RNA sequence: GGGAACGACUCGAGUAGAGUCGAAAACAGGAAAGUGGUUAAUCGUUUUCCUUGGUAGUAUAGCGGAAACCAUAAAUAAGAAGAACUCUAAGUGCUUGAGUAGAGUUAAAAUAAUUAGACAGGCAAUUAAGGUACUCCACGUUCGCGUGGAGUACAAGUGGUGAGUUAUCUUCGGAUAACUCACCACAAAAGAAACAACAACAACAAC
Reactivity to 2A3 in 0.01 (KOAc 150mM, MgCl2 10mM, bicine 150mM(pH8.5), 24C), signal-to-noise 2, nucleotides 027 to 156: c040a010g170g020a050a050a030g050u030g060g000u150u170a080a110u140c030g010u040u010u030u020c010c010u030u050g200g020u010a020g000u040a050u070a090g010c040g000g040a000a070a060c030c000a020u030a100a100a030u130a060a070g100a070a000g040a090a010c000u000c000u010a000a000g010u000g250c000u000u010g010a010g000u000a000g010a000g000u100u170a000a000a000a020u120a000a000u270u010a010g000a000c000a000g010g010c020a010a040u260u170a140a050g080g000u000a000c010u000c000c000a000c000g010u000u050c160g000c000g100u010g010g010a000g000u000a000c000a000a010
Structure probing data (2A3) for a 207-nucleotide construct. Conditions: 150 mM KOAc, 10 mM MgCl2 and 150 mM bicine (pH 8.5), 24 C. Values are in units of 0.01, from 0 to 300, in steps of 10. For 2A3, 729 sequencing reads were counted. It was measured as part of the RMDB library M2RFPK. 2A3 adducts were read by reverse transcription with SuperScript II with manganese.